[RMDB]
This 177-nucleotide RNA was probed chemically with 2A3.

RNA sequence: GGGAACGACUCGAGUAGAGUCGAAAAAGAUGGACUACGGUCCAUCAUCUUUCAGUGUUGAAACAUUCUCUACUGAACCAAGCUCCAAAACAAGUUCACUGGGGUUUGUUUCACUAUUGCAAGAAAAGAGUGCGACUUAGUUCGCUAAGUCGCACUCAAAAGAAACAACAACAACAAC
Reactivity to 2A3 in 0.01 (KOAc 150mM, MgCl2 10mM, bicine 150mM(pH8.5), 24C), signal-to-noise 2, nucleotides 027 to 126: a000g000a010u020g000g000a000c010u060a040c250g090g030u000c000c000a000u020c000a000u010c010u000u050u000c000a030g020u000g030u060u150g000a000a000a000c000a010u010u000c010u000c010u010a030c020u010g000a000a000c010c010a060a090g160c090u200c060c100a060a130a140a160c040a130a000g000u000u010c010a000c050u060g000g000g020g000u000u000u000g000u010u000u000c010a010c010u030a030u060u010g020c040a010a010g000a000a080a030a020
The RNA was probed in 150 mM KOAc, 10 mM MgCl2 and 150 mM bicine (pH 8.5) at 24 C. Reactivities are rounded to 0.1 and cut off at 0 and 3.